[RMDB]
RNA sequence: GGGAACGACUCGAGUAGAGUCGAAAAUUCAUCGAAACGCCGUACCGCAAGGUGGUCGACGGCGUGGUUAGCGACGAGAUCGUGUACCUGACCGCCGACGAGGAGGACCGCCACGUGGUGGCACAGGCAGACAUUCCAGGUUCGCCUGGAAUGUCUGAAAAGAAACAACAACAACAAC
Reactivity to 2A3 in 0.01 (KOAc 150mM, MgCl2 10mM, bicine 150mM(pH8.5), 24C), signal-to-noise 2, nucleotides 027 to 126: u020u010c000a030u140c070g110a200a000a030c090g000c010c010g140u090a010c000c000g000c080a050a180g070g020u040g000g000u000c050g020a080c020g000g020c010g000u010g030g000u070u100a020g010c020g010a030c080g110a030g050a300u020c010g010u010g050u050a050c050c020u060g100a170c030c000g030c010c030g030a040c030g090a040g130g090a050g030g190a030c010c020g000c010c000a030c110g000u020g000g040u000g030g030c010a010c000a030g130g090
Reactivity to DMS in 0.01 (KOAc 150mM, MgCl2 10mM, bicine 150mM(pH8.5), 24C), signal-to-noise 2, nucleotides 027 to 126: u010u000c090a040u020c100g000a070a120a190c060g000c010c000g070u010a040c050c020g000c050a150a300g010g010u000g010g000u000c040g000a120c000g000g000c000g040u000g030g030u000u000a230g020c000g010a000c040g030a180g000a300u010c010g010u000g010u010a080c030c010u000g000a220c090c000g000c000c020g040a140c060g020a100g010g010a110g000g000a080c070c070g010c000c000a050c300g020u000g040g000u020g010g000c030a090c170a050g010g000